[RMDB]
RNA sequence: GGGAACGACUCGAGUAGAGUCGAAAAGUUUUACCCUCAGGUACAGGUAAGUCACCCGCUUCAAACGUCUUCUUAAUAUGCGUAAUUGCAUCUACUCUAAAUCCAUCAAUGCCUUUAUCAAACCACCAUGUGUAAUGAACUUCGGUUCAUUACACAUAAAAGAAACAACAACAACAAC
Reactivity to 2A3 in 0.01 (KOAc 150mM, MgCl2 10mM, bicine 150mM(pH8.5), 24C), signal-to-noise 4, nucleotides 027 to 126: g010u070u040u130u220a080c000c030c000u030c070a090g110g000u080a060c010a010g080g030u090a080a000g040u030c020a060c020c020c040g000c030u070u050c070a100a150a060c040g040u020c010u110u000c020u060u200a150a100u140a110u200g000c010g040u090a120a120u080u100g000c000a020u020c010u050a080c010u000c000u040a050a110a070u000c020c020a010u040c030a100a000u090g030c010c000u080u110u080a120u110c080a110a100a040c010c030a040c030c020
Reactivity to DMS in 0.01 (KOAc 150mM, MgCl2 10mM, bicine 150mM(pH8.5), 24C), signal-to-noise 4, nucleotides 027 to 126: g030u000u000u000u010a110c030c000c020u020c100a090g010g000u000a070c100a070g010g010u010a050a100g010u000c060a120c020c020c030g010c070u000u000c080a050a070a120c080g020u000c060u000u000c070u000u010a070a100u010a060u000g020c030g000u000a100a100u020u010g020c030a030u000c050u010a050c050u010c030u000a050a100a080u000c070c020a040u000c040a060a060u010g010c030c030u010u010u000a090u020c130a060a070a150c080c040a090c130c100